[RMDB]
RNA sequence: GGGAACGACUCGAGUAGAGUCGAAAAGAUAUGGAUCUACUCCGACAUGGUAGACCUCGAUAAGAUGCCAUCGGAAACGAUGGGCAUCUUUUGACGAGGCCUACCAUGUCGGAGUAGAUCCUAAGUCGGAUGGUAGAUAGUUCGCUAUCUACCAUCCAAAAGAAACAACAACAACAAC
Reactivity to DMS in 0.01 (KOAc 150mM, MgCl2 10mM, bicine 150mM(pH8.5), 24C), signal-to-noise 2, nucleotides 027 to 126: g010a100u000a300u000g010g000a020u000c000u000a010c000u000c000c010g020a030c000a000u010g020g020u000a010g020a010c000c000u010c010g010a180u000a040a000g010a010u000g000c010c000a080u010c000g010g000a110a100a190c000g010a010u000g050g030g030c010a000u000c000u000u000u010u000g020a270c150g000a020g010g010c010c010u000a000c000c010a000u000g000u010c000g010g000a000g010u000a000g030a000u010c000c000u000a020a080g010u010c120